The record gives the reactivity of an RNA of 207 nucleotides to 2A3. Source: RMDB library OK3TST, as collected in RNAgym. The RNA was probed in 150 mM KOAc, 10 mM MgCl2 and 150 mM bicine (pH 8.5) at 24 C. Values cover nucleotides 27 to 156.
RNA sequence: GGGAACGACUCGAGUAGAGUCGAAAACAGGACGCCUACAGGAUGCUGUCCCGGUUGAGUGGGAGAGAACACAGCGUGUUCACAGGUGUCGCGAUCGUCCACUGCUCCAGCAAAGACCAUCAGCUGGACACCAGGGUCUCGGAAUUCUACGAGGAAAGAUUAGGACCUCAUUCGUGAGGUCCUAAUCAAAAGAAACAACAACAACAAC
Reactivity to 2A3 in 0.01 (KOAc 150mM, MgCl2 10mM, bicine 150mM(pH8.5), 24C), signal-to-noise 1, nucleotides 027 to 156: c030a020g000g050a030c010g080c080c070u150a040c070a080g080g000a000u130g050c000u010g080u050c000c010c000g190g010u290u270g120a090g000u180g010g010g000a090g020a010g030a050a000c000a000c000a040g130c090g030u030g090u030u130c050a070c010a080g000g000u000g000u010c000g060c030g050a060u060c070g060u050c000c010a030c050u020g010c020u060c000c000a030g010c060a120a150a020g030a090c100c020a030u150c030a010g000c010u090g000g000a000c010a030c000c000a020g030g000g010u000c010u030c030g010g100a030a060u130u010c050u050a090c070g020a000g000g080a040a050a050